[RMDB]
The record gives the reactivity of an RNA of 177 nucleotides to 2A3 and DMS. The data come from the RNA Mapping Database (RMDB), library OK2TRN. The reactions ran in a buffer of 150 mM KOAc, 10 mM MgCl2 and 150 mM bicine (pH 8.5), at 24 C. For 2A3, 1,933 sequencing reads were counted. Reactivities are given for positions 27 through 126. For DMS the reverse transcriptase was MarathonRT. As a SHAPE reagent, 2A3 marks flexible, mostly unpaired nucleotides at the ribose 2'-OH.
RNA sequence: GGGAACGACUCGAGUAGAGUCGAAAAGCUGGAGGGCUCUGGAGGAGGGCCUGCAGGGAUGCUCCUGGGCCGGCAGAGCGAUGCAGCCGCCACACGAGACCCACUACGCGCUGGCCAGGGACGGCUGAACACGUAGUGUCUUCGGACACUACGUGUUAAAAGAAACAACAACAACAAC
Reactivity to 2A3 in 0.01 (KOAc 150mM, MgCl2 10mM, bicine 150mM(pH8.5), 24C), signal-to-noise 1, nucleotides 027 to 126: g020c030u000g020g100a050g090g040g010c010u060c050u090g120g030a150g090g040a040g000g020g070c020c020u050g000c030a020g080g080g070a110u180g030c040u090c030c030u040g030g060g040c000c000g000g040c010a010g020a010g060c010g030a040u100g040c010a030g020c010c010g000c020c010a030c010a010c080g110a050g110a230c000c030c000a020c030u100a050c080g020c000g000c080u060g030g030c000c030a030g130g000g030a050c060g000g000c000u070g050
Reactivity to DMS in 0.01 (KOAc 150mM, MgCl2 10mM, bicine 150mM(pH8.5), 24C), signal-to-noise 3, nucleotides 027 to 126: g010c030u000g010g010a130g010g000g010c030u000c020u000g010g020a170g010g010a110g000g010g020c080c020u000g030c030a040g020g020g010a090u010g000c060u000c040c050u000g000g010g020c020c020g010g020c030a070g000a080g010c040g000a100u010g000c030a060g010c020c040g020c030c010a070c090a060c120g000a080g000a150c050c020c010a120c120u000a060c130g030c060g020c070u000g010g000c030c020a100g000g000g020a070c060g000g000c020u010g010